[RMDB]
RNA sequence: GGGAACGACUCGAGUAGAGUCGAAAAGCUGGCAUGUCUUCGAAAUUGAUUGACUUAUGGACAUGUGAGGUGGCUGCGAGCUAGCAGCGCCAGGGGACUUGUCGCACCUGAGCGCGCUGGCGAAUUCUACUCACACGGGGUUCGCCCCGUGUGAGUAAAAAGAAACAACAACAACAAC
Reactivity to 2A3 in 0.01 (KOAc 150mM, MgCl2 10mM, bicine 150mM(pH8.5), 24C), signal-to-noise 3, nucleotides 027 to 126: g010c040u000g000g000c000a000u000g000u000c000u130u000c090g240a160a170a120u150u210g150a130u190u150g050a090c040u150u120a200u300g010g000a000c010a000u000g020u030g080a160g100g050u060g020g010c000u060g030c100g080a030g010c000u000a000g000c130a020g020c000g000c000c000a010g000g020g030g000a090c040u080u210g040u140c130g010c070a120c000c000u010g000a070g040c000g000c000g000c000u000g000g000c000g000a000a020u120u050c030
Reactivity to DMS in 0.01 (KOAc 150mM, MgCl2 10mM, bicine 150mM(pH8.5), 24C), signal-to-noise 2, nucleotides 027 to 126: g000c000u000g000g020c020a020u030g000u000c000u000u030c080g040a080a030a090u000u050g000a150u080u060g020a110c170u080u030a110u020g000g000a000c020a000u000g010u000g040a080g020g000u000g020g020c060u040g030c120g020a210g000c000u000a000g000c000a090g030c020g000c000c000a030g000g010g000g000a020c050u040u000g040u000c130g020c230a030c020c010u000g000a130g000c000g000c000g000c040u030g000g000c000g000a050a110u020u010c050

Chemical mapping of a 177-nucleotide RNA with 2A3 and DMS. For 2A3 the reverse transcriptase was SuperScript II with manganese. The reactions ran in a buffer of 150 mM KOAc, 10 mM MgCl2 and 150 mM bicine (pH 8.5), at 24 C. Reactivities are given for positions 27 through 126. It was measured as part of the RMDB libraries RFM100 and RFMREP. DMS adducts were read by reverse transcription with MarathonRT.